[RMDB]
This 177-nucleotide RNA was probed chemically with 2A3 and DMS.
Source: RMDB library OK1LIB, as collected in RNAgym.
2A3 adducts were read by reverse transcription with SuperScript II with manganese.
RNA sequence: GGGAACGACUCGAGUAGAGUCGAAAACAUCUAAGCGUUUGUGUGUCGCUGUGCGAGCGUCUCGCAGCCUCGAGGAAAACACACGAUGGAAAAGGAGCCAUCACGCCUUCCGCAGAGGAGUGGCACGAUCGCAUAUGAGCUUCGGCUCAUAUGCGAUAAAAGAAACAACAACAACAAC
Reactivity to 2A3 in 0.01 (KOAc 150mM, MgCl2 10mM, bicine 150mM(pH8.5), 24C), signal-to-noise 4, nucleotides 027 to 126: c060a110u150c070u170a080a030g050c080g040u030u080u080g100u010g020u000g010u030c000g010c050u090g030u060g150c000g030a000g010c170g160u080c050u050c100g020c010a040g030c000c010u000c010g000a090g000g020a030a020a110a000c030a010c000a010c100g000a010u010g000g070a020a100a160a280g200g010a050g060c020c000a020u000c020a020c080g060c010c020u000u000c000c000g030c080a040g040a030g070g000a030g050u060g010g000c040a010c070g030
Reactivity to DMS in 0.01 (KOAc 150mM, MgCl2 10mM, bicine 150mM(pH8.5), 24C), signal-to-noise 2, nucleotides 027 to 126: c090a080u000c090u000a100a070g000c040g020u020u020u000g040u060g000u000g040u000c000g000c010u020g020u090g000c040g000a000g000c170g000u000c020u000c060g000c100a120g020c000c010u000c010g000a300g020g040a020a000a000a040c250a060c120a070c060g000a040u000g000g000a040a110a150a200g000g040a170g000c000c020a020u020c050a300c250g000c140c040u000u050c000c000g030c210a180g000a040g000g000a150g020u000g030g010c080a030c050g000
In probing experiments dimethyl sulfate is read out at A N1 and C N3, which are open when not base-paired. Conditions: 150 mM KOAc, 10 mM MgCl2 and 150 mM bicine (pH 8.5), 24 C. The DMS profile rests on 1,620 reads.